[RMDB]
RNA sequence: GGGAACGACUCGAGUAGAGUCGAAAACGAUCGUACAGCGCGAUCGGUACAGGCCGGAUCAUCUAGUACUAUCGUCGGCCGAUCGCGAUCGUGGCGCGAGGCCUGCUGUGAUCGCGGUACUGAUCUCAUACUAGAGCGAGUUCGCUCGCUCUAGUAUAAAAGAAACAACAACAACAAC
Reactivity to 2A3 in 0.01 (KOAc 150mM, MgCl2 10mM, bicine 150mM(pH8.5), 24C), signal-to-noise 5, nucleotides 027 to 126: c010g000a020u040c030g030u060a080c050a140g100c100g020c030g110a000u000c010g000g000u040a030c030a020g000g000c010c010g030g040a080u100c040a040u050c090u140a070g090u120a120c060u080a060u100c030g190u020c020g040g000c020c020g010a060u070c020g020c000g000a000u040c030g010u030g020g010c010g000c040g040a100g130g030c000c070u080g040c040u040g030u040g020a000u020c010g010c000g020g020u010a060c020u070g030a040u010c030u020c030
Reactivity to DMS in 0.01 (KOAc 150mM, MgCl2 10mM, bicine 150mM(pH8.5), 24C), signal-to-noise 5, nucleotides 027 to 126: c070g000a010u010c030g000u000a040c050a160g020c220g020c150g000a010u000c010g000g000u000a030c040a100g000g010c010c010g000g000a120u000c100a150u010c050u000a050g010u000a030c060u000a050u000c040g020u000c030g000g000c020c020g010a060u020c020g020c020g000a020u000c040g020u010g010g020c000g010c110g000a130g020g020c080c040u010g020c020u010g000u000g000a010u000c010g010c010g000g000u000a010c030u010g000a050u000c010u000c090
Structure probing data (2A3 and DMS) for a 177-nucleotide construct. It was measured as part of the RMDB library OK2TRN. The 2A3 profile rests on 6,828 reads. Reactivities are given for positions 27 through 126. For DMS, 8,263 sequencing reads were counted.